[RMDB]
RNA sequence: GGGAACGACUCGAGUAGAGUCGAAAAAUAACGGUGUAGAUGAAUUAAUAGACAGAACCAAGAACUGGAAGACGUAUCGUCAGACGUUUCAGGAACAACAGCAUCUCCUAAGCGGCCAGGGGCGCGGCAAUCCGUUCAGUUACCUGAUGCCUCAAGGGAACAAAGAGUUGUUCGCAACUCUUUGUUCAAAAGAAACAACAACAACAAC
Reactivity to 2A3 in 0.01 (KOAc 150mM, MgCl2 10mM, bicine 150mM(pH8.5), 24C), signal-to-noise 3, nucleotides 027 to 156: a000u110a040a010c070g000g020u020g020u020a070g010a070u040g010a110a110u170u210a140a120u100a100g050a040c050a050g090a060a010c030c040a040a050g060a070a030c060u070g040g000a060a010g070a040c000g020u050a070u160c030g050u060c090a050g010a110c000g020u000u040u030c060a030g010g040a020a080c020a050a040c020a060g050c010a060u000c030u020c060c000u070a140a000g030c040g050g000c020c000a010g000g000g020g000c040g030c000g020g000c010a030a050u070c020c010g020u050u060c060a050g000u030u010a090c000c000u020g010a030u050g010c000c000u040c090a050a050g050g020
Reactivity to DMS in 0.01 (KOAc 150mM, MgCl2 10mM, bicine 150mM(pH8.5), 24C), signal-to-noise 1, nucleotides 027 to 156: a060u000a020a050c050g030g010u010g000u000a110g020a180u000g000a100a090u000u000a060a140u000a090g010a150c050a050g010a130a120c030c000a110a120g000a110a110c030u000g020g010a160a060g010a070c060g010u000a010u000c030g010u000c090a110g010a120c070g000u000u000u030c030a100g020g000a040a110c050a010a080c000a060g030c040a100u010c050u010c010c020u000a060a060g000c020g020g000c000c040a090g000g000g050g000c000g060c070g000g000c040a080a110u000c060c040g040u000u000c020a130g040u000u000a080c040c000u010g020a060u000g000c020c040u010c040a040a140g000g000